RNA sequence: GGGAACGACUCGAGUAGAGUCGAAAAGUAUAGAAGCAUGAGACCGCAUGCGUUAUACGAUGAAUCGCGGUCGAAUCCGUUGUGCGAAAGCACUUCGGUAAUGCAUAUCGGUAGCCAGAUCUGCCCGGAUCAGCUACCGUAAUUAGUACGGGCAAGAGCCUGCAUAAUAUUUCGAUAUUAUGCAGGCAAAAGAAACAACAACAACAAC
Reactivity to DMS in 0.01 (KOAc 150mM, MgCl2 10mM, bicine 150mM(pH8.5), 24C), signal-to-noise 1, nucleotides 027 to 156: g020u000a110u020a100g030a150a240g010c030a030u000g040a230g000a050c000c040g000c010a070u010g010c000g050u010u000a140u000a110c140g010a090u020g020a080a080u010c110g050c000g020g010u000c000g000a050a130u000c000c000g000u000u010g020u010g000c010g020a170a130a200g010c000a050c000u000u000c000g030g000u000a030a000u000g010c050a120u010a110u000c010g020g050u000a000g000c020c020a270g030a010u000c020u020g000c060c010c050g090g000a120u000c010a080g000c020u000a000c020c000g050u000a000a030u000u010a100g010u000a140c020g000g020g000c020a110a140g010a140
Reactivity to 2A3 in 0.01 (KOAc 150mM, MgCl2 10mM, bicine 150mM(pH8.5), 24C), signal-to-noise 4, nucleotides 027 to 156: g110u090a070u070a230g110a150a010g000c010a010u010g000a000g000a020c000c010g000c030a020u140g040c000g020u070u090a180u070a150c110g030a080u200g080a080a110u080c080g000c000g000g000u000c010g000a000a000u010c000c000g000u000u000g010u000g000c020g030a040a010a010g000c000a000c000u000u010c010g000g000u000a000a000u000g000c010a020u040a050u210c000g000g020u000a000g010c010c030a070g010a000u000c020u050g010c000c010c000g010g000a000u000c000a010g000c000u000a000c000c000g000u000a000a000u050u030a020g090u040a060c040g000g010g000c020a040a010g060a010
Chemical mapping of a 207-nucleotide RNA with DMS and 2A3. For DMS the reverse transcriptase was MarathonRT.